Background
This 177-nucleotide RNA was probed chemically with DMS and 2A3. The data come from the RNA Mapping Database (RMDB), library TTRDES. For DMS the reverse transcriptase was MarathonRT. Values cover nucleotides 27 to 126. Conditions: 150 mM KOAc, 10 mM MgCl2 and 150 mM bicine (pH 8.5), 24 C. High 2A3 reactivity points to a flexible backbone, as in loops and unpaired stretches.

[RMDB]
RNA sequence: GGGAACGACUCGAGUAGAGUCGAAAAGAUAUGGACCACUGAUAGACAUGGCAUGCAUCGGAAACGAUGUGCAUGCCAACAGCUAUAGUGGUCCUAAGUCAAACGUUACGUCUUCGGACGUAACGAAGAAAGUACUCCGGUUCGCCGGAGUACUUUCAAAAGAAACAACAACAACAAC
Reactivity to DMS in 0.01 (KOAc 150mM, MgCl2 10mM, bicine 150mM(pH8.5), 24C), signal-to-noise 1, nucleotides 027 to 126: g000a010u000a110u010g010g020a020c000c000a020c000u000g000a000u000a000g010a010c080a130u040g000g020c000a000u000g030c000a010u000c020g010g010a030a020a050c000g030a020u000g030u000g020c010a000u000g010c000c000a040a040c260a170g010c000u000a000u000a000g010u000g000g040u000c000c000u000a000a050g010u000c040a080a130a300c010g040u000u000a000c000g030u010c010u010u020c280g010g000a010c000g010u000a000a000c000g040a080a080
Reactivity to 2A3 in 0.01 (KOAc 150mM, MgCl2 10mM, bicine 150mM(pH8.5), 24C), signal-to-noise 1, nucleotides 027 to 126: g020a000u080a010u030g000g000a010c000c010a030c070u040g260a090u020a000g020a030c220a300u120g000g000c000a000u020g010c000a000u000c010g070g000a020a010a010c000g000a000u050g100u150g080c000a000u010g080c040c000a030a000c040a020g010c010u000a000u000a000g020u000g000g010u000c000c010u000a020a000g030u000c000a010a010a070c000g000u000u020a000c000g000u060c040u000u100c300g100g000a010c030g000u000a000a010c010g000a050a060